[RMDB]
RNA sequence: GGGAACGACUCGAGUAGAGUCGAAAAUUGAUGAUGCUGUACAUGAUUGUAUCAUUACAGGAAAAUUGGAUCUUAGUACCAACCUUUUUGGUAAUGUUGGUCUAUUAUUCAAGAAGACUCCAUGGUUUGUACAAAAGUGUGGUGCACUUUUUGUAGACUCCUCUUAGGAGUUCGCUCCUAAGAGGAGAAAAGAAACAACAACAACAAC
Reactivity to DMS in 0.01 (KOAc 150mM, MgCl2 10mM, bicine 150mM(pH8.5), 24C), signal-to-noise 1, nucleotides 027 to 156: u000u030g020a070u000g030a100u000g000c090u000g000u040a090c180a110u020g030a160u000u000g030u010a300u010c070a100u010u000a050c070a100g000g000a130a050a060a230u000u030g010g000a000u010c010u000u000a020g000u010a060c000c000a000a020c020c060u000u000u040u000u010g030g010u010a050a050u000g010u010u000g000g000u000c000u000a030u000u000a020u000u000c010a040a050g000a100a050g010a110c060u000c040c010a190u000g030g000u000u000u010g000u000a010c040a070a010a040a100g000u020g050u000g020g050u010g000c020a040c010u000u020u000u010u000g030u000a130g020a170
Reactivity to 2A3 in 0.01 (KOAc 150mM, MgCl2 10mM, bicine 150mM(pH8.5), 24C), signal-to-noise 2, nucleotides 027 to 156: u160u140g030a010u050g020a060u040g020c030u000g040u140a060c060a140u070g040a110u150u130g060u180a050u040c000a010u010u020a020c060a110g000g070a030a030a000a090u020u000g010g000a000u020c020u020u040a030g000u200a040c000c000a000a000c020c040u090u090u010u120u250g260g080u200a080a060u040g010u010u000g010g030u000c000u000a010u030u000a010u000u000c000a000a020g060a020a000g040a080c020u020c050c000a000u010g160g070u050u140u140g060u030a020c000a010a000a000a080g000u000g020u070g050g230u170g140c020a010c020u050u110u000u030u100g020u000a010g020a030